[RMDB]
RNA sequence: GGGAACGACUCGAGUAGAGUCGAAAAGAAAGAAGUGAGUGUUUCUUUGGCAGUGUCUUAGCUGGUUGUUGUGAGCAAUAGUGAAGGAAGCAAUCAGCAAGUAUACUGCCCUAGAAGUGCUGCACAAGGGAAGGAUCCGAUUCGUCGGAUCCUUCCCAAAAGAAACAACAACAACAAC
Reactivity to 2A3 in 0.01 (KOAc 150mM, MgCl2 10mM, bicine 150mM(pH8.5), 24C), signal-to-noise 1, nucleotides 027 to 126: g000a010a100a000g040a200a050g000u030g080a000g080u000g000u030u000u000c010u000u020u000g000g000c000a000g000u000g000u000c040u000u050a160g020c000u000g030g000u040u000g020u070u020g170u120g020a030g060c050a090a240u150a120g080u040g070a190a100g000g090a050a000g000c000a000a000u020c000a050g010c020a000a000g020u010a000u000a000c000u000g000c000c000c000u030a000g000a000a000g050u000g010c020u120g040c000a000c020a130a090